[RMDB]
RNA sequence: GGGAACGACUCGAGUAGAGUCGAAAAUCCAGGGCAACCGUGGCUUUCGAUUGUUACUGUGGGAACCGGAGGUAACAGUCUACAGCCAUGGUCGCCCCGCAGCAAAAUCGUCGUGUUCGCACGACGAGAGGGAGACAAAGUUCGCUUUGUCUCCCUCAAAAGAAACAACAACAACAAC
Reactivity to DMS in 0.01 (KOAc 150mM, MgCl2 10mM, bicine 150mM(pH8.5), 24C), signal-to-noise 1, nucleotides 027 to 126: u030c010c010a180g000g020g020c020a010a000c040c010g010u000g000g000c020u000u000u000c300g000a020u000u000g000u010u000a020c020u010g040u020g000g000g040a130a160c160c100g050g020a210g010g000u010a000a000c040a020g010u000c000u000a130c300a010g000c010c000a020u000g010g000u000c010g000c000c000c000c060g000c170a090g000c250a050a040a100a230u000c000g000u000c000g030u010g000u000u010c240g000c000a000c010g000a020c010g000a010
Reactivity to 2A3 in 0.01 (KOAc 150mM, MgCl2 10mM, bicine 150mM(pH8.5), 24C), signal-to-noise 2, nucleotides 027 to 126: u010c000c000a010g030g020g000c000a010a000c010c000g000u000g010g000c070u010u050u030c030g000a010u000u000g000u010u010a030c030u060g050u280g130g120g180a150a170c120c080g160g030a080g100g000u000a010a000c010a000g010u040c000u000a010c040a020g020c030c000a000u000g000g000u010c000g000c000c000c020c020g030c030a050g080c010a010a050a030a280u040c000g000u000c000g000u010g030u060u070c190g000c070a000c000g010a000c000g000a010